The data come from the RNA Mapping Database (RMDB), library OK2TST. Structure probing data (2A3 and DMS) for a 177-nucleotide construct. For 2A3 the reverse transcriptase was SuperScript II with manganese. The DMS profile rests on 1,153 reads. High 2A3 reactivity points to a flexible backbone, as in loops and unpaired stretches.
RNA sequence: GGGAACGACUCGAGUAGAGUCGAAAAGCAAUGCCCUGCUGGAGCGUUUUCUCCUGAACGUGGCUGGCAUCCAUGUUGGCCUGAACCCAGCGGGCCAUAUCAAUAACGCUGGAUUUCACGCCAUAGGCUCCUGUCACUCAUUCGUGAGUGACAGGAGAAAAGAAACAACAACAACAAC
Reactivity to 2A3 in 0.01 (KOAc 150mM, MgCl2 10mM, bicine 150mM(pH8.5), 24C), signal-to-noise 1, nucleotides 027 to 126: g090c050a100a170u170g040c000c000c010u000g010c040u030g060g020a030g020c050g020u000u000u020u040c040u010c000c040u030g020a040a020c050g010u030g150g030c000u000g010g000c000a030u000c030c030a080u150g040u070u030g050g020c010c000u000g020a020a030c010c000c020a010g000c000g050g000g000c010c000a090u120a020u060c060a050a200u100a100a030c050g020c050u010g000g000a030u030u080u050c010a020c020g040c010c010a010u040a070g090g000
Reactivity to DMS in 0.01 (KOAc 150mM, MgCl2 10mM, bicine 150mM(pH8.5), 24C), signal-to-noise 2, nucleotides 027 to 126: g030c120a090a060u000g040c060c000c040u000g010c040u000g030g020a300g000c050g020u010u000u000u000c110u000c060c060u000g000a050a050c050g020u000g010g040c010u010g000g010c030a020u010c040c030a060u000g030u000u000g050g000c010c030u010g000a020a060c150c000c010a090g000c000g000g000g000c060c080a060u020a080u020c160a120a080u000a090a140c030g000c050u000g000g000a040u000u000u020c030a030c250g000c020c010a030u010a070g000g000